Chemical mapping of a 207-nucleotide RNA with 2A3.
RNA sequence: GGGAACGACUCGAGUAGAGUCGAAAAGAAGGGUGAAAGCCCUUGAUACUGUAGUGGAAAUUAUAAAUAAGAAGAGUUCUGAGUUGCUUAAGCAGAACUAAAAUACAAAGACAAGCAUUAUUACAAACAUGGCGAGGUAAGUUCGCUUACCUCGCAACGCAGCAAAUUACUUCGGUAAUUUGCUGCGAAAAGAAACAACAACAACAAC
Reactivity to 2A3 in 0.01 (KOAc 150mM, MgCl2 10mM, bicine 150mM(pH8.5), 24C), signal-to-noise 2, nucleotides 027 to 156: g110a000a010g000g000g000u070g030a050a010a010g000c000c000c000u000u000g010a010u020a050c070u050g060u170a050g040u040g010g020a100a010a070u110u050a150u100a210a060a050u220a120a080g060a040a060g030a020g060u020u000c010u000g020a050g080u080u040g030c010u020u060a020a020g010c000a000g010a000a000c030u070a000a010a000a040u130a030c060a030a020a020g040a020c020a040a000g000c000a000u040u050a070u100u140a190c110a000a120a010c040a100u150g090g000c000g000a000g000g000u000a000a000g020u030u100c080g000c090u000u000a000c000c000u000c000g000c000a000a000